RNA sequence: GGGAACGACUCGAGUAGAGUCGAAAAAUGCACGGGCGCAACAUCAACGGGCCGACGCCGCACAACAGCAUCUUGAGACAUUGGCGGCUGCGCAUGCCUUAAGCGCGCCUGCCGUCGAUCCUGGGUGGUUUCCUAACGCCUCCAACAACACACCGCCCCAAUUCAUCUCGUUCGCGAGAUGAAUUGGAAAAGAAACAACAACAACAAC
Reactivity to 2A3 in 0.01 (KOAc 150mM, MgCl2 10mM, bicine 150mM(pH8.5), 24C), signal-to-noise 2, nucleotides 027 to 156: a000u080g000c040a000c100g040g030g000c000g010c030a000a130c010a200u160c050a070a090c050g000g030g000c050c000g050a050c050g020c040c020g030c070a290c030a130a120c020a050g080c000a120u050c080u140u290g080a150g010a140c030a080u020u010g020g000c020g020g000c020u050g030c030g000c040a060u160g000c020c020u090u090a140a030g020c000g000c000g010c000c010u010g000c010c010g040u030c010g030a060u020c020c010u020g000g030g000u070g000g000u040u050u100c020c030u060a120a000c020g040c020c010u000c020c030a030a040c000a070a020c060a010c000a010c080c010g030c000c000